An RNA of 207 nucleotides, treated with 2A3 and read out base by base. Reactivities are rounded to 0.1 and cut off at 0 and 3. 2A3 is a SHAPE reagent: it acylates the 2'-hydroxyl of flexible nucleotides of all four kinds. The RNA was probed in 150 mM KOAc, 10 mM MgCl2 and 150 mM bicine (pH 8.5) at 24 C. For 2A3 the reverse transcriptase was SuperScript II with manganese. Source: RMDB library OK3TST, as collected in RNAgym.

RNA sequence: GGGAACGACUCGAGUAGAGUCGAAAACAGGGCUAGAUUUAGCACAGUUGGUGACAUUUAAACUGGGCUUUGAAAGAUGAGUAGGAGUUUGCCAGGCAAAGAAGAGAGCUGGGAAGGCCUUGUAAACACAGGAAAACAAUCUGGACAAAGACACACACAGUGCGUUUUAGUUCGCUAAAACGCACUGAAAAGAAACAACAACAACAAC
Reactivity to 2A3 in 0.01 (KOAc 150mM, MgCl2 10mM, bicine 150mM(pH8.5), 24C), signal-to-noise 2, nucleotides 027 to 156: c060a030g040g010g010c010u020a020g030a300u150u120u140a000g020c010a020c010a060g020u020u020g050g000u100g030a040c050a130u150u160u110a050a080a030c040u030g010g030g020c010u020u050u110g100a090a050a020g070a050u120g010a040g060u050a020g000g010a070g000u000u040u030g010c000c010a020g000g010c020a000a050a070g030a120a000g020a020g000a020g050c030u040g000g040g000a000a030g020g000c000c000u000u010g040u070a020a010a000c090a000c010a050g120g020a090a000a050a000c030a020a040u020c000u010g030g000a010c030a010a100a010g050a020c050a000c030a010c030a040